[RMDB]
Description
Structure probing data (DMS and 2A3) for a 177-nucleotide construct. DMS adducts were read by reverse transcription with MarathonRT. It was measured as part of the RMDB library OK2TRN. The RNA was probed in 150 mM KOAc, 10 mM MgCl2 and 150 mM bicine (pH 8.5) at 24 C.
RNA sequence: GGGAACGACUCGAGUAGAGUCGAAAAGAGAAUACAUUUGUAACUAGUUUAUCCAAACCGUGUUUUUGAUAAGAAUUAAAUAGGUAACGAAACUCGUAAAUGUAACCCCACCUAUCCAUAAACAGCGAUCAUAUUAUCGAUUCGUCGAUAAUAUGAUAAAAGAAACAACAACAACAAC
Reactivity to DMS in 0.01 (KOAc 150mM, MgCl2 10mM, bicine 150mM(pH8.5), 24C), signal-to-noise 7, nucleotides 027 to 126: g010a150g020a130a210u010a030c020a020u000u000u010g010u000a150a080c060u000a040g010u000u000u000a070u010c050c090a050a170a050c030c040g010u010g010u010u000u000u000u000g010a130u010a090a100g000a090a120u000u010a020a040a040u010a120g010g010u010a080a150c180g000a040a030a030c020u000c080g010u000a020a030a020u000g000u000a040a120c080c020c000c040a050c080c030u000a060u000c050c040a070u010a060a060a080c110a080g010c210g000
Reactivity to 2A3 in 0.01 (KOAc 150mM, MgCl2 10mM, bicine 150mM(pH8.5), 24C), signal-to-noise 4, nucleotides 027 to 126: g080a020g050a110a040u040a040c030a030u030u040u090g090u100a080a040c010u010a040g040u020u050u070a110u010c030c010a060a060a030c040c030g090u050g070u120u030u020u050u030g080a100u090a190a070g050a110a120u140u040a070a050a030u090a070g000g030u020a030a010c050g010a050a010a020c010u000c030g010u040a020a020a010u010g010u030a030a060c000c000c010c000a010c020c030u070a090u080c040c020a070u100a110a170a070c020a020g080c020g060